[RMDB]
Structure probing data (2A3 and DMS) for a 177-nucleotide construct. For DMS the reverse transcriptase was MarathonRT. Values cover nucleotides 27 to 126. For 2A3 the reverse transcriptase was SuperScript II with manganese. The reactions ran in a buffer of 150 mM KOAc, 10 mM MgCl2 and 150 mM bicine (pH 8.5), at 24 C.

RNA sequence: GGGAACGACUCGAGUAGAGUCGAAAAGCUUUCCGUUUCGACGGAAAGCAAAGGCAAGUACAUGAGAGAUCAAAGAUCACUCAGAAAAGCCGUACAAAAGAAAAAUCAAUCUGUUCGCAGAUUGAAACACAAUGAUUACUUUCGAGUAAUCAUUGUGAAAAGAAACAACAACAACAAC
Reactivity to 2A3 in 0.01 (KOAc 150mM, MgCl2 10mM, bicine 150mM(pH8.5), 24C), signal-to-noise 5, nucleotides 027 to 126: g000c000u010u000u000c000c000g010u020u030u140c200g100a010c000g020g010a000a010a010g010c000a030a010a010g000g000c020a030a050g100u050a080c100a200u100g000a000g010a000g000a010u020c080a300a210a020g020a010u000c000a040c040u000c000a000g040a010a070a000a010g010c010c010g040u060a020c060a010a120a040a040g090a040a110a020a000a020u030c000a000a000u000c000u010g030u030u060c230g010c070a000g000a010u010u010g000a020a060a000
Reactivity to DMS in 0.01 (KOAc 150mM, MgCl2 10mM, bicine 150mM(pH8.5), 24C), signal-to-noise 6, nucleotides 027 to 126: g010c000u000u000u000c000c000g010u000u000u010c170g020a020c000g000g000a010a000a000g010c000a010a030a050g010g010c010a020a050g010u000a110c070a090u010g010a020g010a060g010a000u000c030a150a120a210g000a030u000c000a070c000u000c000a040g000a030a110a220a260g010c000c000g010u010a110c170a060a050a070a090g010a030a090a090a110a110u010c000a010a000u000c000u000g000u000u010c180g020c000a010g000a010u000u000g000a030a130a150